[RMDB]
RNA sequence: GGGAACGACUCGAGUAGAGUCGAAAACGCGAACGCGGCCAACAGCCAGGCGAACACCGCCGCCGCGCCGAUGGCGAAGGUACAGAUCAGCAGCACCCGGCGGUGCAGGUUGUUGGUCUCGGCUACGGAUCAAUAUGCGGUUCGCCGCAUAUUGAUCAAAAGAAACAACAACAACAAC
Reactivity to DMS in 0.01 (KOAc 150mM, MgCl2 10mM, bicine 150mM(pH8.5), 24C), signal-to-noise 1, nucleotides 027 to 126: c060g010c090g010a120a150c040g020c080g010g000c010c010a020a020c030a040g000c000c010a150g020g030c080g020a130a150c060a030c050c000g010c010c030g020c190c060g030c050g010c000c000g000a040u010g010g000c020g010a070a060g000g030u000a100c140a140g010a110u010c090a060g000c050a090g010c010a070c060c160c010g020g000c000g000g020u000g000c040a090g000g000u000u000g010u000u000g000g000u000c010u000c020g000g020c070u000a030c130g000
Reactivity to 2A3 in 0.01 (KOAc 150mM, MgCl2 10mM, bicine 150mM(pH8.5), 24C), signal-to-noise 1, nucleotides 027 to 126: c050g020c040g060a110a010c010g010c020g070g000c000c010a000a000c000a020g000c010c010a030g160g000c090g060a040a000c010a010c000c000g000c000c010g050c040c020g030c020g000c010c040g250a200u180g030g000c050g020a120a100g080g000u100a090c050a040g150a130u130c030a020g170c020a010g050c000a050c010c050c030g030g000c020g070g010u010g030c010a010g020g030u040u000g000u020u010g000g020u010c000u000c000g020g000c010u080a040c050g110
Structure probing data (DMS and 2A3) for a 177-nucleotide construct.
It was measured as part of the RMDB library OK2TRN.
2A3 adducts were read by reverse transcription with SuperScript II with manganese.
DMS adducts were read by reverse transcription with MarathonRT.
The RNA was probed in 150 mM KOAc, 10 mM MgCl2 and 150 mM bicine (pH 8.5) at 24 C.